[RMDB]
RNA sequence: GGGAACGACUCGAGUAGAGUCGAAAACUGGUGAAGCACCAGGCGCCCCACCUGGCGAGGUCACUGCGUUUUGCUCAGCUCUCUAUAGGCAUAACCGAUCGAGCCAGCGCCAGUCGGUCGUCGGCGGCACAACCGCGAUGUUCGCAUCGCGGUUGUGAAAAGAAACAACAACAACAAC
Reactivity to DMS in 0.01 (KOAc 150mM, MgCl2 10mM, bicine 150mM(pH8.5), 24C), signal-to-noise 1, nucleotides 027 to 126: c020u000g000g000u000g000a130a190g000c090a050c010c000a050g020g020c180g000c070c000c020c080a190c200c030u000g000g020c020g030a220g010g020u000c010a100c110u010g000c200g010u000u000u010u000g010c030u000c100a120g000c040u000c130u000c060u000a170u000a160g000g020c010a030u000a030a050c000c000g030a010u000c080g000a300g000c000c090a070g000c070g010c020c040a040g040u000c040g010g000u000c060g000u000c030g000g000c020g000g020
Overview
An RNA of 177 nucleotides, treated with DMS and read out base by base. For DMS, 833 sequencing reads were counted. The reactions ran in a buffer of 150 mM KOAc, 10 mM MgCl2 and 150 mM bicine (pH 8.5), at 24 C.